The record gives the reactivity of an RNA of 177 nucleotides to DMS and 2A3. The data come from the RNA Mapping Database (RMDB), library TTRDEL.
[RMDB]
RNA sequence: GGGAACGACUCGAGUAGAGUCGAAAAGAUAUGGAAAGGUUGCGCAAGGCGAUGGAUCGGAAACGAUCCUACCGCUGAUGACCGAACUCCUUUCCUAAGUCAAAAGCCGUACGUUCGCGUACGGCAACUGAUACUUCCUGUUCGCAGGAAGUAUCAGAAAAGAAACAACAACAACAAC
Reactivity to DMS in 0.01 (KOAc 150mM, MgCl2 10mM, bicine 150mM(pH8.5), 24C), signal-to-noise 3, nucleotides 027 to 126: g000a040u000a260u010g010g000a010a000a020g000g010u000u000g010c090g020c070a130a300g000g010c000g010a080u000g010g000a000u000c000g020g010a080a030a120c020g010a010u000c000c000u000a010c080c010g010c000u000g010a080u010g000a150c300c020g010a090a100c160u010c010c000u000u000u000c000c000u000a030a080g000u000c040a070a080a120a110g010c000c000g010u000a010c010g010u000u010c200g030c020g010u000a000c000g000g000c010a020a010
Reactivity to 2A3 in 0.01 (KOAc 150mM, MgCl2 10mM, bicine 150mM(pH8.5), 24C), signal-to-noise 3, nucleotides 027 to 126: g020a010u060a020u060g000g000a010a020a020g100g020u190u220g150c060g010c120a190a280g010g010c000g000a020u000g000g010a010u010c020g020g070a040a020a010c000g000a000u000c000c000u000a050c010c030g000c010u020g020a150u180g090a060c060c040g020a070a060c060u110c010c000u000u000u000c000c000u000a040a010g020u010c030a000a040a130a050g020c000c010g000u000a010c000g010u030u070c300g020c000g090u000a000c000g000g030c000a000a010
The DMS profile rests on 2,940 reads. 2A3 adducts were read by reverse transcription with SuperScript II with manganese. DMS adducts were read by reverse transcription with MarathonRT. The 2A3 profile rests on 5,996 reads.